The data come from the RNA Mapping Database (RMDB), library OK2TRN. Chemical mapping of a 177-nucleotide RNA with DMS. DMS adducts were read by reverse transcription with MarathonRT. Reactivities are rounded to 0.1 and cut off at 0 and 3.
RNA sequence: GGGAACGACUCGAGUAGAGUCGAAAAUCCUCCAUUUCCCCGCCAAGAAGCCAUGCGCGCACACGCCUCGGUGUGAAGCGCAGAUUCACCAACAGCACCGUCAGGGUGAUGGAGGAGAGAGUUAACACGCUAUCAAGCGGUUCGCCGCUUGAUAGCGAAAAGAAACAACAACAACAAC
Reactivity to DMS in 0.01 (KOAc 150mM, MgCl2 10mM, bicine 150mM(pH8.5), 24C), signal-to-noise 1, nucleotides 027 to 126: u000c000c000u000c060c010a020u000u000u000c150c000c020c070g000c060c130a110a170g000a180a060g000c070c090a080u000g000c030g100c020g000c040a020c010a020c020g000c130c130u020c080g000g040u020g000u000g000a080a130g020c000g090c000a040g000a120u000u020c160a190c230c140a040a080c200a090g000c070a020c090c120g010u000c050a070g000g000g020u010g000a000u000g030g030a060g100g000a040g000a030g060a100g020u040u000a180a110c220a110